An RNA of 207 nucleotides, treated with 2A3 and read out base by base. The data come from the RNA Mapping Database (RMDB), library M2RFPK. Conditions: 150 mM KOAc, 10 mM MgCl2 and 150 mM bicine (pH 8.5), 24 C.
RNA sequence: GGGAACGACUCGAGUAGAGUCGAAAAGAAAGAUUUCUAUCCAGAGAGGUGGAGGGACUGGUCCUAUGAAACCUCGGCAACAUUAUUGUGCCAAUUCCAGCAAGCGCUAGCUUGAAAGAUAGGAAAAAACAGGUUGCGCGCUUCGGCGCGCAACCAACUAUGAUGAUCUGUUCGCAGAUCAUCAUAGAAAAGAAACAACAACAACAAC
Reactivity to 2A3 in 0.01 (KOAc 150mM, MgCl2 10mM, bicine 150mM(pH8.5), 24C), signal-to-noise 1, nucleotides 027 to 156: g090a020a060a010g040a010u030u030u050c000u000a030u030c020c020a000g040a040g000a000g100g080u000g000g020a000g000g000g030a040c000u010g010g000u060c020c000u170a300u220g000a010a030a000c000c020u000c040g000g030c030a150a140c040a030u040u220a050u150u300g020u010g000c000c000a030a030u130u150c000c000a030g000c020a040a000g000c000g110c120u170a130g000c010u020u010g020a130a000a000g000a000u030a010g030g050a080a070a000a000a000a030c050a060g010g000u000u010g000c020g060c040g010c060u080u190c300g100g000c050g140c010g020c010a000a000c000c000a000a000